[RMDB]
RNA sequence: GGGAACGACUCGAGUAGAGUCGAAAAGACUACUGUUCUCACCUUGAACAAGGUGUUAGGGGCAUUAUACAGGUGAGAGAACAGACUCAGACCCGAACACUGUGGUGGAGAAAAUUCAAGAUACAGGUGGUGUGCAAACAUAGCAUAUCUGAAUAAGCUUAAUAGUGUCAUUCGUGACACUAUUAAGAAAAGAAACAACAACAACAAC
Reactivity to DMS in 0.01 (KOAc 150mM, MgCl2 10mM, bicine 150mM(pH8.5), 24C), signal-to-noise 4, nucleotides 027 to 156: g000a130c020u000a150c030u000g020u000u000c000u010c030a050c020c020u000u000g030a150a110c090a090a090g040g030u010g030u010u000a090g030g030g030g000c040a070u000u000a150u000a130c110a050g030g010u000g000a100g010a110g010a070a060c030a100g010a170c090u000c030a140g010a120c020c010c000g000a090a080c060a060c090u010g020u000g000g050u010g010g010a110g000a080a050a060a090u000u010c060a070a110g020a120u000a050c070a050g000g020u000g040g060u010g030u000g010c080a090a070a100c100a070u000a080g010c050a110u000a070u000c020u000g010a070a090u000a080a140g010
Reactivity to 2A3 in 0.01 (KOAc 150mM, MgCl2 10mM, bicine 150mM(pH8.5), 24C), signal-to-noise 8, nucleotides 027 to 156: g030a020c060u070a030c010u160g020u030u010c010u010c010a020c010c010u030u110g100a150a050c070a200a110g040g010u020g020u060u110a070g000g010g010g010c040a040u030u090a100u150a160c080a020g020g000u020g020a040g000a010g020a050a010c010a000g020a100c010u010c070a050g050a140c010c000c020g020a070a020c060a000c020u040g020u030g040g030u030g030g050a050g060a040a080a040a040u120u070c050a060a020g010a070u050a080c030a020g020g060u010g010g020u030g010u020g010c020a030a130a060c040a090u100a050g040c030a030u030a030u090c040u030g040a080a070u150a150a020g030